RNA sequence: GGGAACGACUCGAGUAGAGUCGAAAAAAAAAAGCGACCAAAACCUGGAGGAGGAUGGAACACUGGGGGGAGCCGAUACCGAGGACAGGGCAGUCCUGGAGGCAACCGUUAUCCACCUCAGGAAAAAUCAUUAUUAGCGUUUCGACGCUAAUAAUGAAAAAGAAACAACAACAACAAC
Reactivity to 2A3 in 0.01 (KOAc 150mM, MgCl2 10mM, bicine 150mM(pH8.5), 24C), signal-to-noise 1, nucleotides 027 to 126: a010a010a000a000a000a030g060c070g030a090c060c050a060a080a030a060c000c010u050g190g010a030g010g030a010g000g030a040u030g080g000a160a050c050a040c210u180g000g000g010g080g000g010a000g000c000c000g040a090u130a100c000c010g130a020g000g000a000c010a010g030g150g030c010a000g000u000c010c020u010g000g020a020g010g040c020a040a020c020c020g090u110u070a000u000c010c000a010c030c020u020c000a010g010g000a050a070a000a000a000
Reactivity to DMS in 0.01 (KOAc 150mM, MgCl2 10mM, bicine 150mM(pH8.5), 24C), signal-to-noise 1, nucleotides 027 to 126: a000a030a040a040a030a090g040c070g000a170c030c070a110a090a050a140c000c010u000g010g020a040g000g030a060g000g000a050u000g000g010a030a020c150a090c160u010g000g000g000g000g000g000a220g030c070c030g000a070u000a050c030c010g000a000g000g010a030c020a070g010g010g020c210a110g000u000c010c000u010g000g010a090g000g010c020a030a060c050c020g000u010u000a040u000c000c010a060c000c000u000c020a040g000g000a010a030a040a050a090